[RMDB]
RNA sequence: GGGAACGACUCGAGUAGAGUCGAAAAUUCUGUUGCUGCGGUCAAUUCUCGCCAAGAUGCUACCGAUUCUGCUAUUGCUACUAUUCAAGGACAAGUUCUAACUGCUCCCGGCACGCUAUCUGAUCUAGAGAAUGGUGCUGCACUUGAUCCUGCUGCCGUGGAGAUAUUGGUUCGCCAAUAUCUCCACAAAAGAAACAACAACAACAAC
Reactivity to DMS in 0.01 (KOAc 150mM, MgCl2 10mM, bicine 150mM(pH8.5), 24C), signal-to-noise 1, nucleotides 027 to 156: u000u000c060u000g050u000u000g020c030u010g000c000g090g020u020c020a030a170u010u010c000u000c040g020c030c060a030a210g030a060u000g010c000u000a090c050c010g010a150u000u000c040u000g010c000u000a080u010u000g020c030u000a100c080u010a140u010u010c050a150a120g020g010a100c090a060a090g000u010u000c040u000a020a030c050u000g000c040u000c020c050c000g000g080c020a070c060g020c030u000a080u000c120u000g000a130u020c120u000a090g000a090g000a060a080u000g000g020u000g010c010u000g000c060a040c020u030u000g000a110u000c020c030u010g000c050u000g000c040c110
Reactivity to 2A3 in 0.01 (KOAc 150mM, MgCl2 10mM, bicine 150mM(pH8.5), 24C), signal-to-noise 2, nucleotides 027 to 156: u000u010c030u020g060u040u050g030c020u030g030c030g060g040u060c050a050a120u140u040c050u040c040g040c030c000a060a000g070a110u090g020c010u040a050c040c010g020a050u030u050c020u030g000c030u020a050u100u160g060c010u020a090c020u100a160u100u150c070a080a020g030g000a040c030a090a040g000u120u090c050u200a100a110c080u050g050c020u050c040c000c000g000g000c010a020c060g000c020u030a030u020c000u040g130a140u030c020u060a110g020a000g010a110a060u070g030g000u020g030c010u020g040c020a020c050u000u110g040a200u050c010c000u000g050c050u080g020c000c100
Chemical mapping of a 207-nucleotide RNA with DMS and 2A3. The 2A3 profile rests on 1,053 reads. DMS (dimethyl sulfate) methylates the pairing face of unpaired adenines and cytosines. For DMS, 2,605 sequencing reads were counted. Conditions: 150 mM KOAc, 10 mM MgCl2 and 150 mM bicine (pH 8.5), 24 C. It was measured as part of the RMDB library OK3TST.